[RMDB]
RNA sequence: GGGAACGACUCGAGUAGAGUCGAAAAGCCAAUUUCGAUUGGCAAAAAGCGUACUACUGGACCAGGCUUGGAUUUAUCCGAACUACUGUACUCCCAAAUAGGAGUACAGCGGAUUGUCAGCCUGGCCCAGUAUCGCCUGGUAGACAUUCGUGUCUAAUUCAUUGUGGAUGUUCGCAUCCACAAUGAAAAAAGAAACAACAACAACAAC
Reactivity to DMS in 0.01 (KOAc 150mM, MgCl2 10mM, bicine 150mM(pH8.5), 24C), signal-to-noise 2, nucleotides 027 to 156: g040c010c010a020a010u000u010u000c190g020a090u000u010g000g000c000a030a100a060a090a080g020c050g000u000a080c110u000a040c020u020g030g020a020c000c010a030g020g000c000u000u000g070g040a060u000u000u000a030u020c010c020g000a100a300c050u010a190c020u000g010u000a010c000u000c000c000c030a020a150a230u000a030g000g030a040g020u000a010c000a010g000c000g030g000a020u000u010g010u000c030a130g010c010c000u000g000g020c000c020c010a040g010u000a000u000c020g020c000c020u000g040g020u000a070g000a020c060a110u000u000c190g000u000g000u010c020u000a100a300
Reactivity to 2A3 in 0.01 (KOAc 150mM, MgCl2 10mM, bicine 150mM(pH8.5), 24C), signal-to-noise 4, nucleotides 027 to 156: g000c000c020a040a010u060u190u150c190g180a060u010u020g010g000c030a030a070a000a050a080g040c040g030u100a070c050u000a000c000u040g020g010a010c000c000a010g020g050c060u190u250g180g020a040u300u230u110a010u080c000c000g010a040a030c070u240a040c000u300g000u000a000c000u050c000c020c030a170a280a120u280a100g000g000a000g000u000a000c000a010g000c010g000g000a000u000u030g000u000c010a000g000c020c000u000g000g010c000c000c000a000g000u000a000u010c000g000c000c000u040g110g080u050a000g010a020c030a070u100u160c230g090u050g020u040c020u030a050a120
Structure probing data (DMS and 2A3) for a 207-nucleotide construct.
2A3 adducts were read by reverse transcription with SuperScript II with manganese.
The DMS profile rests on 3,738 reads.